[RMDB]
RNA sequence: GGGAACGACUCGAGUAGAGUCGAAAAGCCGCAUUCUCGGCAAUUAUCGCAGGAUGCCGCAAGUCAUGGAUGAAGCGCGCGAUAUUCUCCAUAUGCUCGGGCUGUUGCCGCUCGCGCAAUUGCGCGAUCCACUAAUCGACUUCGGUCGAUUAGUGGAAAAAGAAACAACAACAACAAC
Reactivity to DMS in 0.01 (KOAc 150mM, MgCl2 10mM, bicine 150mM(pH8.5), 24C), signal-to-noise 1, nucleotides 027 to 126: g020c000c100g060c080a070u010u000c030u020c020g010g040c070a150a130u000u000a120u000c150g030c160a050g000g000a050u000g000c010c240g000c020a060a110g010u000c120a100u000g000g020a070u000g020a070a090g030c100g020c100g000c040g000a070u000a060u000u010c040u000c000c000a020u000a100u020g020c010u000c000g000g000g010c000u000g010u010u000g000c050c040g000c220u000c000g020c080g000c020a300a070u000u020g000c020g050c010g000a040
Reactivity to 2A3 in 0.01 (KOAc 150mM, MgCl2 10mM, bicine 150mM(pH8.5), 24C), signal-to-noise 2, nucleotides 027 to 126: g010c000c000g050c030a050u000u000c010u040c000g030g000c020a010a150u300u100a160u170c060g010c080a010g000g030a030u050g010c030c010g000c020a050a060g080u040c040a090u120g050g020a010u140g060a040a030g060c060g010c020g000c020g150a060u010a110u150u000c020u020c020c000a030u100a020u110g040c000u010c020g010g000g000c000u030g020u060u030g130c020c030g020c030u030c000g000c010g050c010a110a300u190u300g000c010g010c000g020a040

Structure probing data (DMS and 2A3) for a 177-nucleotide construct. For 2A3 the reverse transcriptase was SuperScript II with manganese.